[RMDB]
RNA sequence: GGGAACGACUCGAGUAGAGUCGAAAAGAAGAGAGCGAAGCACACACUCAGACUGUACGACAGUCUGACACACACCUACGCUAGUGCAUCGUGUGUGUGAUAUCGAUGUUGCACGAAGAUGAGGAAAAGUGUCGUCGUAUUUCGAUACGACGACACUAAAAGAAACAACAACAACAAC
Reactivity to 2A3 in 0.01 (KOAc 150mM, MgCl2 10mM, bicine 150mM(pH8.5), 24C), signal-to-noise 2, nucleotides 027 to 126: g130a010a020g110a000g020a000g010c110g020a080a010g000c030a020c000a000c000a000c050u000c010a010g000a000c000u000g020u150a120c140g140a030c190a020g010u000c000u000g000a010c000a000c000a000c000a010c030c050u190a070c130g000c080u130a110g010u060g100c050a040u040c020g010u010g010u020g000u000g010u030g080a060u050a020u130c060g000a030u080g020u130u070g000c030a010c070g030a060a010g030a070u140g020a030g080g010a080a080a000
Reactivity to DMS in 0.01 (KOAc 150mM, MgCl2 10mM, bicine 150mM(pH8.5), 24C), signal-to-noise 2, nucleotides 027 to 126: g000a080a070g020a080g020a080g000c040g020a080a070g010c030a050c060a050c050a080c080u010c000a000g000a050c000u010g010u000a160c280g020a110c040a020g030u000c000u010g010a040c130a010c040a040c070a040c010c120u000a070c120g000c050u010a120g020u000g000c020a100u000c070g000u010g020u000g010u000g000u000g000a070u000a010u000c040g000a090u000g010u000u010g010c040a030c060g010a050a070g020a100u000g000a100g010g000a060a040a060

About this RNA:
This 177-nucleotide RNA was probed chemically with 2A3 and DMS. The data come from the RNA Mapping Database (RMDB), library M2PK90. The RNA was probed in 150 mM KOAc, 10 mM MgCl2 and 150 mM bicine (pH 8.5) at 24 C. Values cover nucleotides 27 to 126.